[RMDB]
RNA sequence: GGGAACGACUCGAGUAGAGUCGAAAACAUGUUUGUACGUGAUUUGGGCCGACAUCCCCGCCGAAAUAGUCCUGCGAAGAUCUAAGGUCGCUUCUGGAUGGAUUUGCCACCGGGUGCACACCAUCUUAAGAUAGGGGAUUUUCGAAUCCCCUAUCUUAAAAGAAACAACAACAACAAC
Reactivity to DMS in 0.01 (KOAc 150mM, MgCl2 10mM, bicine 150mM(pH8.5), 24C), signal-to-noise 3, nucleotides 027 to 126: c070a070u020g000u000u000u020g050u010a090c040g000u000g010a130u020u020u000g010g000g010c030c030g000a110c120a070u010c030c000c010c040g050c050c020g000a090a060a080u040a070g000u010c020c000u000g020c050g010a050a070g010a040u000c080u030a080a160g010g020u000c060g000c030u010u000c010u000g020g000a060u010g010g000a160u010u030u030g000c010c000a110c050c040g000g000g010u020g000c030a060c100a110c010c050a050u010c030u000u010
Reactivity to 2A3 in 0.01 (KOAc 150mM, MgCl2 10mM, bicine 150mM(pH8.5), 24C), signal-to-noise 3, nucleotides 027 to 126: c020a040u150g050u120u140u100g090u080a050c060g010u030g120a230u060u000u030g010g040g000c000c000g020a020c010a040u060c000c000c000c050g000c000c000g070a140a020a040u140a030g010u010c000c010u040g010c030g050a030a030g020a070u070c070u130a080a000g090g060u050c020g000c010u050u010c020u060g000g070a090u020g070g010a120u050u000u160g050c000c010a050c040c030g060g000g030u070g050c020a010c000a000c010c010a020u020c040u010u010